[RMDB]
RNA sequence: GGGAACGACUCGAGUAGAGUCGAAAAUUCUGACUCAAUGGCACAAAUCAAAGAGAAGACUCGUGUCUUCUUGACACCAUAUAUAUGCUAUGUGCACUCAAAGAAUUGAGAAGCACACAUCAGAAAAAAGAUCAUAGUAAUUCGUUACUAUGAUCUUAAAAGAAACAACAACAACAAC
Reactivity to 2A3 in 0.01 (KOAc 150mM, MgCl2 10mM, bicine 150mM(pH8.5), 24C), signal-to-noise 9, nucleotides 027 to 126: u030u000c010u010g030a030c020u030c150a030a090u060g010g000c040a030c050a110a150a090u110c050a110a130a030g040a010g010a020a010g020a010c030u080c300g220u240g010u230c000u010u000c000u010u030g020a010c000a040c060c050a020u060a000u030a010u020a020u220g040c050u050a030u110g010u000g000c010a020c020u010c010a050a090a070g160a200a230u080u020g000a010g030a150a040g010c000a000c000a000c010a050u060c020a010g060a040a070a010a010
Reactivity to DMS in 0.01 (KOAc 150mM, MgCl2 10mM, bicine 150mM(pH8.5), 24C), signal-to-noise 9, nucleotides 027 to 126: u010u000c010u000g000a060c080u010c180a100a080u010g000g000c020a050c160a070a120a080u010c120a050a110a240g000a010g010a020a010g000a010c000u030c300g010u030g000u000c000u000u000c000u000u000g000a130c150a110c200c140a070u010a050u030a100u010a120u010g000c040u010a040u000g000u000g010c000a250c000u000c010a000a040a140g010a110a120u010u000g000a010g000a090a100g020c000a000c000a070c240a100u000c030a020g010a000a020a050a080
Background: Chemical mapping of a 177-nucleotide RNA with 2A3 and DMS. The data come from the RNA Mapping Database (RMDB), libraries RFM100 and RFMREP. Conditions: 150 mM KOAc, 10 mM MgCl2 and 150 mM bicine (pH 8.5), 24 C. For DMS the reverse transcriptase was MarathonRT.